[RMDB]
RNA sequence: GGGAACGACUCGAGUAGAGUCGAAAAUGAGUAACAUUUGCUAGUAGAGUUAGUUUCCUUGGACUCAGUGCUAUGUAUUUUUCUUAAUUAUCAUUACAGAUAAUUAUUUCUAGCAUGUAAGCUAUCGGUUUGACAAUUAUUUCGAUAAUUGUCAAACAAAAGAAACAACAACAACAAC
Reactivity to 2A3 in 0.01 (KOAc 150mM, MgCl2 10mM, bicine 150mM(pH8.5), 24C), signal-to-noise 9, nucleotides 027 to 126: u110g010a040g140u180a120a020c020a060u030u030u110g020c020u010a030g050u060a050g060a010g040u060u080a010g010u000u050u020c000c000u000u060g040g010a040c010u020c070a030g020u000g020c010u030a040u190g050u050a220u150u160u030u050u030c040u030u030a010a010u000u010a000u000c000a020u010u300a100c040a050g000a000u000a010a010u010u020a020u010u060u010c010u000a000g000c000a000u040g060u110a080a040g000c020u050a050u210c070g050
Reactivity to DMS in 0.01 (KOAc 150mM, MgCl2 10mM, bicine 150mM(pH8.5), 24C), signal-to-noise 7, nucleotides 027 to 126: u010g000a240g000u020a090a120c020a020u010u000u010g000c030u000a030g020u030a180g000a040g000u000u000a060g010u010u000u000c010c000u010u020g000g010a070c020u010c160a160g010u000g000c020u010a020u040g000u010a040u010u020u010u030u020c110u010u000a010a000u000u000a000u000c000a080u010u060a180c130a170g000a010u000a000a010u000u000a020u020u020u000c040u010a010g000c010a030u000g010u010a120a090g010c030u000a050u020c160g010
Notes
This 177-nucleotide RNA was probed chemically with 2A3 and DMS. Values cover nucleotides 27 to 126. DMS adducts were read by reverse transcription with MarathonRT. The RNA was probed in 150 mM KOAc, 10 mM MgCl2 and 150 mM bicine (pH 8.5) at 24 C. It was measured as part of the RMDB libraries RFM100 and RFMREP.